[RMDB]
RNA sequence: GGGAACGACUCGAGUAGAGUCGAAAAAGGGCUGACAGGAAUCGACAGUAGAGUGUAUCAUGUCAGUAAGCAUGCCGGGGAAUGGUGGUUUACCCCGUUAUCAAAUGAUUACCGACCAAUAAUUGGCUUAGCUCGUUGGGCUUCGGCCCAACGAGAAGCCUCAGUCUUACUUCGGUAAGACUGAGGCAAAAGAAACAACAACAACAAC
Reactivity to 2A3 in 0.01 (KOAc 150mM, MgCl2 10mM, bicine 150mM(pH8.5), 24C), signal-to-noise 1, nucleotides 027 to 156: a000g110g000g000c000u010g010a010c000a000g010g070a040a090u180c070g090a040c090a040g170u220a090g070a090g050u150g010u040a120u090c030a010u060g000u020c000a010g010u040a010a010g060c060a040u130g040c000c010g000g000g010g010a020a050u030g000g010u000g000g050u010u030u060a060c030c010c000c000g030u040u010a010u030c010a000a040a030u040g020a030u110u070a010c010c040g080a060c040c040a020a030u180a160a050u080u030g090g000c020u060u070a060g080c000u020c020g050u020u020g000g000g010c000u030u010c060g120g000c000c000c060a000a000c010g020a000g000a010a010

Chemical mapping of a 207-nucleotide RNA with 2A3.